[RMDB]
RNA sequence: GGGAACGACUCGAGUAGAGUCGAAAAGAUAUGGAGGAAGGCAACAGCCAAUGGGUCGGAAACGACCCUUGGACAUGCCUUUCUCCUAAGUCAAAGUGCGCUGAAUGGUUCGCCAUUCAGCGCACAAUCGUGAUAUAAGGUUCGCCUUAUAUCACGAAAAAGAAACAACAACAACAAC
Reactivity to 2A3 in 0.01 (KOAc 150mM, MgCl2 10mM, bicine 150mM(pH8.5), 24C), signal-to-noise 2, nucleotides 027 to 126: g000a010u020a020u080g000g000a010g000g020a000a000g000g000c030a080a040c080a290g120c040c040a020a030u300g000g000g020u010c000g000g010a040a010a000c000g010a010c000c010c030u000u020g000g000a030c010a000u010g000c000c000u000u000u000c000u000c000c000u000a000a000g000u000c010a000a030a100g000u020g000c020g000c020u000g000a000a000u010g050g030u100u250c300g050c130c000a000u000u000c000a000g000c020g000c000a000c000a000a000
Reactivity to DMS in 0.01 (KOAc 150mM, MgCl2 10mM, bicine 150mM(pH8.5), 24C), signal-to-noise 4, nucleotides 027 to 126: g000a030u000a230u000g000g000a010g000g000a010a000g000g010c010a030a120c300a170g010c010c000a000a010u010g030g000g020u000c000g000g000a060a030a110c000g000a010c000c000c010u010u000g000g010a090c110a150u000g000c000c000u000u000u000c000u010c000c000u000a000a050g000u000c020a100a090a100g010u000g020c000g030c000u000g000a020a010u000g010g020u000u010c240g000c010c000a000u000u000c000a000g000c010g010c000a000c000a000a030

Structure probing data (2A3 and DMS) for a 177-nucleotide construct. The data come from the RNA Mapping Database (RMDB), library TTRDEL. Reactivities are given for positions 27 through 126. For 2A3 the reverse transcriptase was SuperScript II with manganese. The RNA was probed in 150 mM KOAc, 10 mM MgCl2 and 150 mM bicine (pH 8.5) at 24 C.